[RMDB]
RNA sequence: GGGAACGACUCGAGUAGAGUCGAAAAUCAAGAGACUGGAACUAAAUUAGUCCAUGCAGCUUCUGAAAUGUUUAGUAGAACAAUACUCAGCACUACUAAGGACGAUGGCUUAACCAACAACCACCUUAAAGAGUCUAUCCUCAAUACGGGACUAGAACUAAUUAGGUGACUUCGGUCACCUAAUUAGAAAAGAAACAACAACAACAAC
Reactivity to DMS in 0.01 (KOAc 150mM, MgCl2 10mM, bicine 150mM(pH8.5), 24C), signal-to-noise 2, nucleotides 027 to 156: u010c020a090a130g010a070g020a070c050u000g010g030a050a110c050u010a080a140a130u000u000a080g020u000c010c010a100u000g000c020a050g020c010u010u020c010u010g020a080a110a130u010g000u000u000u000a050g010u000a070g020a040a090c040a090a090u030a090c030u020c010a060g020c220a200c010u010a010c020u020a040a070g020g010a050c030g020a050u020g020g060c010u010u010a030a260c070c090a070a090c060a030a060c000c010a030c030c040u000u010a020a040a110g010a100g010u010c020u020a080u000c000c010u020c060a060a120u000a110c100g010g000g010a110c070u000a080g020a090a240
Reactivity to 2A3 in 0.01 (KOAc 150mM, MgCl2 10mM, bicine 150mM(pH8.5), 24C), signal-to-noise 4, nucleotides 027 to 156: u080c020a050a020g040a000g050a070c060u100g030g040a150a030c030u090a100a150a290u180u090a050g010u020c000c010a010u070g040c020a040g020c050u040u020c010u120g030a040a070a080u080g020u030u050u040a050g030u010a030g050a180a050c070a140a080u090a090c030u040c050a010g020c050a020c020u040a020c010u030a030a050g020g010a010c020g060a050u030g010g000c000u030u080a070a040c030c030a010a040c000a010a040c040c030a040c020c030u070u130a040a130a040g040a010g010u010c000u020a030u000c010c020u060c020a070a040u100a150c060g040g010g040a020c030u100a040g060a090a020
Source information: An RNA of 207 nucleotides, treated with DMS and 2A3 and read out base by base. Reactivities are rounded to 0.1 and cut off at 0 and 3. The RNA was probed in 150 mM KOAc, 10 mM MgCl2 and 150 mM bicine (pH 8.5) at 24 C.